The record gives the reactivity of an RNA of 177 nucleotides to 2A3.
RNA sequence: GGGAACGACUCGAGUAGAGUCGAAAAGACACCCUUGGCAGAUGACCUCCUCGUUGGUGUGUGUCGGUAAUGUUGUCAGUCACAGGCAACAGUUAACGAUCUGCCUAAAUAAAAAGAGAAGAACAAACAUCGGGUGCAUCUUCGGAUGCACCCGAUGAAAAGAAACAACAACAACAAC
Reactivity to 2A3 in 0.01 (KOAc 150mM, MgCl2 10mM, bicine 150mM(pH8.5), 24C), signal-to-noise 1, nucleotides 027 to 126: g000a000c000a020c000c010c000u030u070g000g000c000a000g000a000u030g050a000c000c000u000c000c000u150c060g300u140u180g000g160u120g000u010g000u030g100u040c090g020g000u130a040a010u030g000u000u000g000u000c010a060g260u120c040a030c030a150g000g010c000a000a000c050a000g080u120u050a050a020c070g020a000u000c000u000g010c000c000u000a000a000a000u100a000a060a040a000a000g110a000g060a160a030g040a150a000c040a180a000a000

The 2A3 profile rests on 418 reads.